The record gives the reactivity of an RNA of 207 nucleotides to 2A3 and DMS. The data come from the RNA Mapping Database (RMDB), library RNAMAK. The 2A3 profile rests on 1,905 reads. DMS adducts were read by reverse transcription with MarathonRT. Reactivities are given for positions 27 through 156.
RNA sequence: GGGAACGACUCGAGUAGAGUCGAAAACGAACUGUUCGCAGUUCGAUCUUGGGGUCUCUCGAGCGGACCAACAGCGAACUACUUCUGAAGCCUCCACGGAAGCGACAUGGUCCGUGAGAGAGACGGAGGCACCCGUUGCCCCGGAUUCGUCCGGGAACAGGGUAAAACAAUUCGUUGUUUUACCCUGAAAAGAAACAACAACAACAAC
Reactivity to 2A3 in 0.01 (KOAc 150mM, MgCl2 10mM, bicine 150mM(pH8.5), 24C), signal-to-noise 2, nucleotides 027 to 156: c000g000a000a000c000u050g030u110u140c300g010c140a000g000u010u000c000g030a120u040c080u080u170g020g000g010g020u000c000u000c000u000c010g020a010g000c000g000g020a000c050c020a060a060c060a070g110c010g080a140a060c090u170a070c000u240u010c010u020g050a160a030g070c010c020u040c030c010a030c010g010g000a020a000g030c020g080a130c070a180u200g000g000u030c000c000g000u020g000a000g000a000g010a000g000a000c010g000g010a000g000g030c040a040c040c010c010g020u040u110g050c020c000c000c010g000g000a020u060u090c180g000u030c050c000g000g000g000a010a000
Reactivity to DMS in 0.01 (KOAc 150mM, MgCl2 10mM, bicine 150mM(pH8.5), 24C), signal-to-noise 2, nucleotides 027 to 156: c000g000a030a000c010u000g030u010u020c230g000c030a050g000u000u010c010g040a060u020c020u000u020g000g030g050g020u000c000u000c010u000c030g020a300g020c000g000g000a040c020c000a030a110c180a180g010c080g030a090a170c050u020a060c010u000u010c010u000g000a040a220g030c020c000u010c010c020a300c060g020g000a030a020g010c040g000a070c100a120u000g020g030u000c000c000g010u000g000a300g000a020g030a040g000a050c030g000g000a000g100g020c020a220c000c040c040g000u010u000g000c040c010c000c010g020g000a100u000u010c180g050u000c000c000g020g020g000a100a180